The record gives the reactivity of an RNA of 177 nucleotides to 2A3 and DMS. For DMS, 3,291 sequencing reads were counted. The RNA was probed in 150 mM KOAc, 10 mM MgCl2 and 150 mM bicine (pH 8.5) at 24 C. DMS adducts were read by reverse transcription with MarathonRT. Source: RMDB library M2PK50, as collected in RNAgym. For 2A3, 1,846 sequencing reads were counted. High DMS reactivity at an A or C suggests that its Watson-Crick edge is free.
RNA sequence: GGGAACGACUCGAGUAGAGUCGAAAAGGCCGAGAGUUCGCUCUCGGCCAAAGAAUAAAAGAGCGUACCCAACCCAAACAACGCUCAAAGAAGGGAGGGAAAAAAGCAUAAUCUUCGGAUUAUGCAAGUUACGUACUAAGUUCGCUUAGUACGUAACAAAAGAAACAACAACAACAAC
Reactivity to 2A3 in 0.01 (KOAc 150mM, MgCl2 10mM, bicine 150mM(pH8.5), 24C), signal-to-noise 1, nucleotides 027 to 126: g000g040c010c050g000a000g040a000g010u140u220c290g010c100u010c010u000c000g000g000c000c010a000a000a000g000a000a050u240a140a120a080a120g010a000g000c020g030u080a060c020c010c040a070a070c030c000c050a010a100a040c030a050a020c000g010c010u030c030a060a050a000g060a020a060g080g010g060a060g030g000g000a000a030a000a020a020a130g000c000a000u000a010a000u000c030u040u060c240g030g000a010u000u000a000u010g000c010a010a000
Reactivity to DMS in 0.01 (KOAc 150mM, MgCl2 10mM, bicine 150mM(pH8.5), 24C), signal-to-noise 3, nucleotides 027 to 126: g010g010c000c000g000a040g000a030g020u000u010c210g010c000u000c000u000c020g000g010c000c000a000a010a040g000a200a110u010a050a050a100a120g000a010g010c000g010u000a080c040c030c040a120a140c030c020c000a080a100a090c120a080a090c000g010c010u000c010a040a080a070g000a050a100g000g010g000a110g020g000g010a000a040a070a030a130a070g010c000a000u000a000a010u000c000u000u010c160g040g000a020u010u000a000u000g000c000a010a020